[RMDB]
Overview:
Chemical mapping of a 177-nucleotide RNA with 2A3 and DMS. Source: RMDB libraries RFM100 and RFMREP, as collected in RNAgym. For 2A3 the reverse transcriptase was SuperScript II with manganese. Values cover nucleotides 27 to 126.

RNA sequence: GGGAACGACUCGAGUAGAGUCGAAAAAGGACGAGAGCAUUGUUAGGACCUUUGGGACAAGCGACGCAUACAGUUGAUCCACACUAACGUUGGUGUCGACAUACUAUCAGUCUCUAAGGAUUGAAAGAUAUGACUUAAUGUUCGCAUUAAGUCAUAUAAAAGAAACAACAACAACAAC
Reactivity to 2A3 in 0.01 (KOAc 150mM, MgCl2 10mM, bicine 150mM(pH8.5), 24C), signal-to-noise 9, nucleotides 027 to 126: a010g100g020a030c070g020a020g010a010g120c080a100u060u090g060u080u110a070g030g100a070c000c000u010u030u050g020g000g000a010c030a060a040g050c030g060a020c040g000c050a020u070a110c060a070g010u010u020g050a090u040c050c020a050c010a020c060u090a140a020c080g080u080u140g030g010u030g010u020c000g000a030c010a040u190a030c020u060a060u180c050a020g010u000c000u000c020u070a040a030g060g020a090u040u140g080a060a050a010g090
Reactivity to DMS in 0.01 (KOAc 150mM, MgCl2 10mM, bicine 150mM(pH8.5), 24C), signal-to-noise 9, nucleotides 027 to 126: a060g010g010a060c060g000a080g010a080g020c060a090u010u010g010u010u010a130g020g000a130c040c020u000u010u010g010g000g000a060c060a080a120g020c060g010a050c080g010c090a070u020a070c120a090g010u000u000g010a080u010c040c040a080c130a080c120u020a060a090c170g000u010u010g010g010u010g010u000c060g010a070c110a070u020a130c120u000a070u010c060a060g000u000c000u010c080u030a050a050g000g000a110u010u010g000a040a080a080g010